[RMDB]
RNA sequence: GGGAACGACUCGAGUAGAGUCGAAAAGACACACUUUGCAGAUGACCUCCUCGUUGGUGAGUGUCGGUAAUGUUGUCAGUCACAGGCAACAGUUAACGAUCUGCCUAAAUAAAAAGAGAAGAACAAACAUUAUGCCUGGAUUCGUCCAGGCAUAAUGAAAAGAAACAACAACAACAAC
Reactivity to 2A3 in 0.01 (KOAc 150mM, MgCl2 10mM, bicine 150mM(pH8.5), 24C), signal-to-noise 5, nucleotides 027 to 126: g050a010c000a000c010a000c120u100u140u200g000c010a010g020a090u030g010a070c000c000u030c000c000u090c070g110u110u170g030g000u080g060a060g010u110g010u020c000g000g010u090a120a050u040g000u000u000g000u000c020a020g180u140c080a070c050a100g000g000c000a000a010c010a030g020u020u100a010a020c020g040a030u000c000u010g000c000c010u210a190a170a100u270a050a100a060a010a000g130a020g020a130a030g060a120a010c040a080a060a010
Reactivity to DMS in 0.01 (KOAc 150mM, MgCl2 10mM, bicine 150mM(pH8.5), 24C), signal-to-noise 5, nucleotides 027 to 126: g000a050c050a060c030a050c050u000u030u020g000c020a030g020a030u000g020a050c030c000u000c050c000u020c090g010u020u030g030g020u000g020a060g010u020g010u000c000g020g020u010a060a080u010g010u010u000g010u010c000a090g010u020c300a100c260a130g010g000c000a000a010c010a020g010u030u010a040a040c030g020a000u000c010u000g010c010c300u020a040a060a030u070a060a070a040a070a080g010a080g020a080a070g010a090a080c140a090a080a210